[RMDB]
The data come from the RNA Mapping Database (RMDB), library M2RFPK. Chemical mapping of a 207-nucleotide RNA with 2A3 and DMS. For 2A3 the reverse transcriptase was SuperScript II with manganese. The reactions ran in a buffer of 150 mM KOAc, 10 mM MgCl2 and 150 mM bicine (pH 8.5), at 24 C. The DMS profile rests on 3,049 reads.
RNA sequence: GGGAACGACUCGAGUAGAGUCGAAAAGGGAAUGGUGGUUUACCCCGUUAUCAAAUGAUUACCGACGAAUAAUUGGCGAAACUCGUUUCGCGUUGGCUGCCUAAUUCAAGGAAUUAGCGUGCCUUCAAAGACAUCAAGAAGUUCGCUUCUUGAUGAACAGCUGUAACAGGUUCGCCUGUUACAGCUGAAAAGAAACAACAACAACAAC
Reactivity to 2A3 in 0.01 (KOAc 150mM, MgCl2 10mM, bicine 150mM(pH8.5), 24C), signal-to-noise 3, nucleotides 027 to 156: g020g010g040a060a090u090g000g040u030g080g040u090u090u250a180c000c000c000c000g060u060u060a080u110c060a030a060a100u140g030a050u050u060a040c040c040g030a030c060g020a080a040u050a180a040u070u090g040g010c030g000a060a030a040c040u030c100g070u050u050u000c020g000c030g000u020u030g010g000c050u080g040c040c010u010a000a010u030u020c130a190a090g180g010a030a030u000u000a000g030c060g070u030g000c000c000u000u010c060a060a080a010g050a020c000a000u000c000a000a000g000a000a000g010u070u170c130g010c130u010u000c000u010u000g000a000u000g000a030a010
Reactivity to DMS in 0.01 (KOAc 150mM, MgCl2 10mM, bicine 150mM(pH8.5), 24C), signal-to-noise 2, nucleotides 027 to 156: g030g020g000a030a070u000g040g040u000g040g030u000u000u000a110c010c000c000c010g030u000u020a090u000c090a120a150a050u010g010a100u000u000a040c040c000g030a100c060g030a080a150u000a070a130u010u000g000g000c000g060a120a060a040c070u000c070g050u000u000u010c020g000c060g000u000u000g030g000c060u010g000c110c010u000a040a010u000u010c010a090a220g040g020a050a050u000u000a010g010c090g030u000g020c000c020u000u000c030a100a150a190g010a200c010a030u000c020a030a030g010a010a050g010u000u000c300g040c000u000u000c000u000u000g010a000u000g010a080a130